[RMDB]
RNA sequence: GGGAACGACUCGAGUAGAGUCGAAAAGAUAUGGACAUACACAGGGUCUAUGGUUUGGCAUCGAUCUCAUAGACUCGGAAACGAGUUUGAGGGAGCCAGCCAUAGACCCUGUGUAUGUCCUAAGUCACUCGAGAUAUAUGUUCGCAUAUAUCUCGAGAAAAGAAACAACAACAACAAC
Reactivity to DMS in 0.01 (KOAc 150mM, MgCl2 10mM, bicine 150mM(pH8.5), 24C), signal-to-noise 2, nucleotides 027 to 126: g010a040u000a300u000g000g010a010c010a000u000a010c000a010c010a020g000g000g010u000c000u000a010u000g000g000u000u000u010g040g010c010a300u000c170g010a080u010c000u000c010a060u010a130g010a080c000u000c000g000g000a100a080a230c010g020a010g000u010u000u000g000a020g000g010g000a040g010c030c000a010g000c000c010a000u010a010g000a000c000c010c000u000g000u010g010u000a000u000g000u000c000c000u000a020a040g010u000c020a260